An RNA of 170 nucleotides, treated with 2A3 and DMS and read out base by base.
The reactions ran in a buffer of 150 mM KOAc, 10 mM MgCl2 and 150 mM bicine (pH 8.5), at 24 C.
High DMS reactivity at an A or C suggests that its Watson-Crick edge is free.
The data come from the RNA Mapping Database (RMDB), library 15KLIB.
Reactivities are rounded to 0.1 and cut off at 0 and 3.
The DMS profile rests on 18,179 reads.
[RMDB]
RNA sequence: GGGAACGACUCGAGUAGAGUCGAAAAGGGGGAGCUCCCUCCCCGUCCUUGUCUUUUCUUAUUAUUCCUCGGACGUUUCCCAGCCAGGGGUUAUCCUCCUCAAGUCUCUUGAUAGUCUUGUUGACCUACGGGUAUGGCUUCGGCCAUACCAAAAGAAACAACAACAACAAC
Reactivity to 2A3 in 0.01 (KOAc 150mM, MgCl2 10mM, bicine 150mM(pH8.5), 24C), signal-to-noise 5, nucleotides 027 to 129: g050g010g010g000g010a040g030c040u080c050c020c010u040c000c010c000c000g060u030c000c000u020u050g070u010c030u020u090u050u000c030u080u130a170u110u060a100u150u080c000c030u020c020g010g030a020c000g000u010u030u050c010c000c010a000g030c050c020a010g000g000g000g000u030u040a110u100c000c000u020c010c000u030c040a060a120g140u000c030u000c000u000u000g000a000u000a000g010u000c030u060u060g060u030u040g050a060c000c000u020a080c050g030
Reactivity to DMS in 0.01 (KOAc 150mM, MgCl2 10mM, bicine 150mM(pH8.5), 24C), signal-to-noise 4, nucleotides 027 to 129: g000g000g000g000g000a010g060c050u030c120c110c010u030c080c010c020c030g030u040c040c060u000u090g040u000c000u000u090u010u010c030u020u030a140u060u020a000u010u010c080c000u020c090g000g060a050c050g030u010u030u030c030c010c040a170g000c080c030a080g000g000g040g060u030u040a070u060c060c000u030c000c030u020c000a050a130g050u010c020u000c020u000u000g020a000u020a040g000u040c020u000u000g030u010u060g010a130c040c000u040a100c150g030